RNA sequence: GGGAACGACUCGAGUAGAGUCGAAAAGACUGCGUGCACUUGAGACGAUAUCGAGCCGGAAAUUAAUCGAUAAUGUCUCCAGUAGUGGAUACGAUCCGGCAAGUAUCGACUACGUGUGCUCGUAGGACACGUCAUGACUGUUCGCAGUCAUGACGUGAAAAGAAACAACAACAACAAC
Reactivity to 2A3 in 0.01 (KOAc 150mM, MgCl2 10mM, bicine 150mM(pH8.5), 24C), signal-to-noise 7, nucleotides 027 to 126: g070a010c000u000g000c000g010u010g000c020a000c010u080u110g000a010g000a010c020g030a040u010a000u120c010g010a010g000c010c010g020g050a070a140a050u260u220a080a160u110c020g010a020u030a090a100u150g010u010c000u010c030c010a030g020u090a020g050u090g120g000a000u000a010c000g020a030u010c000c000g000g000c080a080a000g000u000a000u010c010g080a010c000u050a080c010g060u050g000u000g000c000u000c010g000u010a000g000g000a000
Reactivity to DMS in 0.01 (KOAc 150mM, MgCl2 10mM, bicine 150mM(pH8.5), 24C), signal-to-noise 2, nucleotides 027 to 126: g020a180c010u000g020c020g020u000g000c010a070c030u070u000g010a060g010a050c020g040a050u000a000u000c000g000a210g020c000c000g010g010a120a120a140u040u030a120a200u010c080g000a050u000a030a090u010g000u000c020u000c000c080a090g000u020a050g030u000g000g010a010u050a000c000g000a080u000c000c020g000g000c000a110a210g010u000a000u000c020g000a000c000u000a000c030g000u020g000u000g000c010u000c030g070u000a000g000g060a180
Chemical mapping of a 177-nucleotide RNA with 2A3 and DMS. The reactions ran in a buffer of 150 mM KOAc, 10 mM MgCl2 and 150 mM bicine (pH 8.5), at 24 C. As a SHAPE reagent, 2A3 marks flexible, mostly unpaired nucleotides at the ribose 2'-OH. The DMS profile rests on 3,876 reads. Values cover nucleotides 27 to 126.